RNA sequence: GGGAACGACUCGAGUAGAGUCGAAAAGAGCGAUUAGACAAAGGGGUAGAGCUACAUAUUAGAUAGCUGUAUAAUCGUUCAAGUUACAUCAAAACAUCUUCAAUAUCUAUUACUUACUUUCCUUUCUGCCAGAGUACGGUAUUCGUACCGUACUCAAUUCAACAUCCUGCUUCGGCAGGAUGUUGAAAAAAGAAACAACAACAACAAC
Reactivity to 2A3 in 0.01 (KOAc 150mM, MgCl2 10mM, bicine 150mM(pH8.5), 24C), signal-to-noise 2, nucleotides 027 to 156: g000a000g000c050g000a000u000u010a040g010a060c140a040a170a010g000g090g000g070u030a050g010a010g060c030u010a000c010a010u250a230u080u260a090g250a300u030a010g010c030u000g020u030a060u000a000a000u010c010g000u010u000c020a020a020g000u060u080a050c030a090u070c080a070a240a020a050c030a190u030c060u230u100c080a120a130u110a220u110c050u090a160u170u050a050c020u090u020a030c010u040u120u000c000c000u070u060u080c010u130g030c050c010a120g000a000g000u000a000c010g000g000u020a010u070u050c110g120u000a000c000c000g000u000a000c000u010c000a000a000